[RMDB]
RNA sequence: GGGAACGACUCGAGUAGAGUCGAAAAACUAUUUGUUCUAUAGCAAAGAAACCCGAAACACAGGAUAUAUUUGUUAUAUAUGCUUUGUGGUACACAGCUGUUAGGACGUGAGCCAUCAGGGUCCAAAACCCUGAUGAGGCUUCGGCCUCAUCAGGGUAAAAGAAACAACAACAACAAC
Reactivity to DMS in 0.01 (KOAc 150mM, MgCl2 10mM, bicine 150mM(pH8.5), 24C), signal-to-noise 1, nucleotides 027 to 126: a090c080u010a050u000u020u000g000u000u010c110u000a010u000a020g030c000a010a040a080g000a190a230a010c050c030c040g020a080a000a130c070a070c030a030g000g000a000u000a000u000a000u000u000u040g010u000u000a080u020a060u000a000u000g040c000u040u000u000g010u020g000g010u040a100c110a080c270a010g000c080u000g030u030u010a130g000g000a000c060g050u040g000a060g000c000c040a050u010c050a020g000g000g000u000c070c170a080a080a130
Reactivity to 2A3 in 0.01 (KOAc 150mM, MgCl2 10mM, bicine 150mM(pH8.5), 24C), signal-to-noise 1, nucleotides 027 to 126: a000c090u080a240u040u050u210g020u000u000c000u140a000u110a060g010c000a050a080a090g000a080a090a100c030c010c000g060a080a130a000c070a000c010a050g040g000a000u010a000u000a050u170u060u130g180u300u070a040u010a050u050a000u100g120c000u030u010u030g050u010g000g000u100a010c050a000c000a010g000c000u050g000u030u070a050g000g030a020c000g040u040g050a000g010c000c000a000u090c020a020g120g050g000u000c000c000a050a140a000